[RMDB]
RNA sequence: GGGAACGACUCGAGUAGAGUCGAAAAUGGCCAUCGGGCUGGCAAUCGGGGCGGGCGCGCCGGUGUGUGUCGCGAUGACAUCCGGCACCGCCGUGGCCAACCUCGGUCCGGCGGUGGUGGAGGCAAAACCAGUUAUGAUAUUCGUAUCAUAACUGGUAAAAGAAACAACAACAACAAC
Reactivity to DMS in 0.01 (KOAc 150mM, MgCl2 10mM, bicine 150mM(pH8.5), 24C), signal-to-noise 9, nucleotides 027 to 126: u010g010g010c020c020a050u000c060g020g010g020c030u000g010g010c090a080a070u010c060g020g000g000g020c180g010g010g010c100g010c070g010c080c020g010g010u010g010u000g010u000g010u000c020g010c100g000a090u000g010a060c050a300u000c010c000g000g000c000a020c000c000g010c010c000g000u010g010g000c000c010a090a120c210c160u010c120g010g010u000c010c010g000g010c000g000g010u000g000g010u000g000g000a050g010g010c120a060a050a100
Reactivity to 2A3 in 0.01 (KOAc 150mM, MgCl2 10mM, bicine 150mM(pH8.5), 24C), signal-to-noise 8, nucleotides 027 to 126: u080g070g010c010c000a020u040c050g040g060g010c030u040g040g010c040a030a070u080c030g000g000g020g020c030g020g050g030c120g000c030g030c060c030g010g000u040g010u010g000u010g010u010c010g000c080g140a050u130g060a010c010a050u010c010c000g030g000c000a000c000c000g000c000c000g010u070g010g000c010c000a040a040c030c040u090c080g000g000u010c000c000g010g000c010g000g030u010g000g150u010g010g020a040g030g020c050a040a040a010
This 177-nucleotide RNA was probed chemically with DMS and 2A3. For 2A3, 45,008 sequencing reads were counted. The DMS profile rests on 51,517 reads. High DMS reactivity at an A or C suggests that its Watson-Crick edge is free.